[RMDB]
RNA sequence: GGGAACGACUCGAGUAGAGUCGAAAAGACGGGCAAGAGCAAGCUCAAGAUUGAGUACUCCUUGCUAUUGUGAUGGGACAUUUGAGGGCAGAGCACUCAUUUCUAAGAAGCAUUGAGGAACUUAUGUGUAUUUACCAGCUACAUAGUUCAAGGUGAAGAUGGGCAUGGACUUCGGUCCAUGCCCAUCAAAAGAAACAACAACAACAAC
Reactivity to 2A3 in 0.01 (KOAc 150mM, MgCl2 10mM, bicine 150mM(pH8.5), 24C), signal-to-noise 1, nucleotides 027 to 156: g000a000c070g010g000g000c010a030a000g030a010g040c050a020a040g000c020u010c040a050a080g140a300u140u260g020a000g010u020a100c050u010c010c010u000u060g030c010u040a070u090u260g000u010g010a050u100g020g000g000a030c010a080u000u000u110g040a070g000g050g000c050a000g030a030g040c000a010c020u030c020a050u030u120u060c040u080a110a020g050a090a020g110c050a130u050u080g050a120g000g100a100a000c020u210u110a040u080g070u000g000u030a050u060u040u060a120c090c090a030g000c000u000a020c000a100u020a070g030u030u030c050a060a040g060g020u020g030a060a100
Structure probing data (2A3) for a 207-nucleotide construct. For 2A3 the reverse transcriptase was SuperScript II with manganese. The data come from the RNA Mapping Database (RMDB), library OK3TST. Reactivities are given for positions 27 through 156. The reactions ran in a buffer of 150 mM KOAc, 10 mM MgCl2 and 150 mM bicine (pH 8.5), at 24 C.